RNA sequence: GGGAACGACUCGAGUAGAGUCGAAAAAAACGUUAUGAUAUGGACCUUGAACUACAGCUGGACAACUCCAACAGCUCGGAAACGAGACAUGGAGGGGACAGCUGCAAGGUCCUAAGUCCAAGGAGAAUCAAAGUACAUUGUUCGCAAUGUACUUUGAAAAAGAAACAACAACAACAAC
Reactivity to 2A3 in 0.01 (KOAc 150mM, MgCl2 10mM, bicine 150mM(pH8.5), 24C), signal-to-noise 5, nucleotides 027 to 126: a010a020a010c230g070u290u120a250u300g040a060u030a040u180g000g010a010c000c010u000u000g030a080a040c070u170a080c300a010g010c010u010g030g070a150c020a130a150c040u010c010c020a090a080c050a180g030c010u010c000g010g030a030a080a040c010g000a000g010a020c040a100u100g010g000a010g000g000g000g000a010c010a000g000c000u000g010c000a000a000g000g000u000c000c000u000a000a010g000u000c000c000a090a090g210g070a180g120a090a080
Reactivity to DMS in 0.01 (KOAc 150mM, MgCl2 10mM, bicine 150mM(pH8.5), 24C), signal-to-noise 6, nucleotides 027 to 126: a050a040a060c130g010u010u010a070u000g000a090u010a280u000g000g010a020c000c000u010u010g020a100a040c110u020a300c020a000g010c000u010g000g000a120c020a040a070c000u000c000c000a030a080c240a190g000c000u000c000g000g000a100a070a180c010g000a010g010a030c070a160u000g000g000a010g000g000g010g010a070c000a010g000c000u000g000c000a010a000g000g000u000c000c010u000a010a060g000u000c020c090a110a110g010g010a120g010a090a160
Chemical mapping of a 177-nucleotide RNA with 2A3 and DMS. The reactions ran in a buffer of 150 mM KOAc, 10 mM MgCl2 and 150 mM bicine (pH 8.5), at 24 C. Values cover nucleotides 27 to 126. For DMS the reverse transcriptase was MarathonRT. For 2A3 the reverse transcriptase was SuperScript II with manganese. For 2A3, 7,833 sequencing reads were counted.